[RMDB]
RNA sequence: GGGAACGACUCGAGUAGAGUCGAAAAGAUAUGGACGAUUGGAGCGAAGAACGUGGGUCGGUCGGAAACGACCGAGCCCACGGGAGCUCUGAUCGUCCUAAGUCAAAAUCGCGUCUUCGGACGCGAACAGAAUAAUGACGUUCGCGUCAUUAUUCUGAAAAGAAACAACAACAACAAC
Reactivity to 2A3 in 0.01 (KOAc 150mM, MgCl2 10mM, bicine 150mM(pH8.5), 24C), signal-to-noise 3, nucleotides 027 to 126: g010a010u070a030u140g010g000a000c010g010a000u020u020g030g000a020g020c040g110a300a120g060a300a150c040g000u010g000g080g000u040c020g020g000u010c000g040g030a110a060a060c030g010a020c020c030g000a040g070c010c000c000a000c000g000g000g000a020g000c000u020c000u000g000a010u000c000g010u010c000c000u000a000a000g000u000c000a000a000a010a270u030c000g000c010g000u000c000u030u070c300g140g000a000c000g000c000g010a010a000
Reactivity to DMS in 0.01 (KOAc 150mM, MgCl2 10mM, bicine 150mM(pH8.5), 24C), signal-to-noise 4, nucleotides 027 to 126: g000a040u000a300u010g010g000a010c010g010a040u000u000g010g020a030g030c000g030a170a140g000a100a170c010g020u000g010g010g030u010c010g000g020u000c010g010g000a100a110a190c020g010a020c000c000g000a030g010c010c000c000a000c000g010g000g000a130g010c020u000c000u000g000a010u000c000g020u020c000c000u000a010a050g030u010c060a100a100a170a170u000c010g010c010g000u000c010u010u010c200g030g000a000c000g010c000g000a010a090